[RMDB]
RNA sequence: GGGAACGACUCGAGUAGAGUCGAAAAUUUCUGGAAGGAAUAGUCAAGUGUCCUGCUCGGCAAAGUCAGUGCAUUGCAAAACUUCCCAGUAGAUAGAAAGAAGCUAGAAGAAAGGCAGGAGGAGGGUCUUUCUCUGUCUUGCAUGAAGGUGCCUGCACCUCCUAUCCUACUUCGGUAGGAUAGGAGGAAAAGAAACAACAACAACAAC
Reactivity to 2A3 in 0.01 (KOAc 150mM, MgCl2 10mM, bicine 150mM(pH8.5), 24C), signal-to-noise 3, nucleotides 027 to 156: u020u030u010c010u020g040g050a030a020g060g030a080a130u060a100g050u140c060a090a070g010u010g030u090c020c000u010g000c030u040c040g060g000c080a130a040a000g030u110c020a000g030u010g030c030a060u000u080g010c010a000a050a080a100c020u020u010c000c000c020a000g020u080a020g040a120u100a050g090a020a080a020g080a040a000g050c060u090a010g010a060a000g020a040a090a050g020g010c050a030g060g090a030g040g020a020g040g060g030u040c000u020u070u000c040u020c040u070g070u040c040u060u080g010c020a050u070g020a000a040g030g010u040g030c010c000u040g000c030a030
Reactivity to DMS in 0.01 (KOAc 150mM, MgCl2 10mM, bicine 150mM(pH8.5), 24C), signal-to-noise 2, nucleotides 027 to 156: u000u010u000c030u000g020g040a130a040g030g010a110a090u000a140g000u000c040a120a100g050u000g020u000c140c000u000g030c020u000c000g020g030c040a040a010a100g010u010c050a060g010u000g000c020a090u020u010g000c060a060a070a100a090c060u000u000c000c010c010a160g020u000a130g010a110u000a090g020a110a060a090g000a070a060g020c040u000a080g010a060a140g010a090a050a090g030g000c040a050g000g010a130g010g000a070g010g020g000u000c020u000u000u000c020u000c000u010g000u000c020u000u000g000c020a110u000g010a050a100g010g010u010g000c020c020u000g020c060a220